[RMDB]
RNA sequence: GGGAACGACUCGAGUAGAGUCGAAAAUUGCCUGGAUGAACGACGAGGCCUUGGCCCGUACCCUGCAAACCCGUGAGGCCACUUACUAUUCGCGAUCCCGUGCCGAACAAUGGGUCAAGGGCGCGACCCGACUUUAUGAAUUCGUUCAUAAAGUCGGAAAAGAAACAACAACAACAAC
Reactivity to DMS in 0.01 (KOAc 150mM, MgCl2 10mM, bicine 150mM(pH8.5), 24C), signal-to-noise 5, nucleotides 027 to 126: u000u000g000c010c010u000g000g010a080u010g010a080a080c140g000a080c050g010a120g010g000c020c040u000u000g020g000c010c010c010g020u010a080c040c020c000u000g020c080a060a070a120c020c030c040g010u000g010a130g010g000c040c070a080c110u000u010a060c140u000a120u000u000c040g020c020g000a120u000c010c020c010g010u000g000c040c040g010a090a110c200a110a090u010g020g010g000u010c020a030a060g020g000g010c010g010c040g010a060c300
Reactivity to 2A3 in 0.01 (KOAc 150mM, MgCl2 10mM, bicine 150mM(pH8.5), 24C), signal-to-noise 7, nucleotides 027 to 126: u080u070g050c010c010u050g050g040a090u100g080a170a040c050g090a010c020g050a130g060g000c020c020u110u130g060g000c010c000c000g010u050a060c030c000c020u030g010c050a040a030a080c020c000c020g020u050g030a040g010g050c030c030a040c030u090u150a060c030u070a110u110u090c010g000c010g070a110u080c000c010c010g010u060g030c020c000g060a150a100c090a150a170u170g060g000g020u040c040a040a050g010g010g010c020g000c000g010a020c010
Source: RMDB library OK2TST, as collected in RNAgym.
The record gives the reactivity of an RNA of 177 nucleotides to DMS and 2A3.
As a SHAPE reagent, 2A3 marks flexible, mostly unpaired nucleotides at the ribose 2'-OH.
DMS adducts were read by reverse transcription with MarathonRT.
For DMS, 5,895 sequencing reads were counted.
Values cover nucleotides 27 to 126.
For 2A3, 9,961 sequencing reads were counted.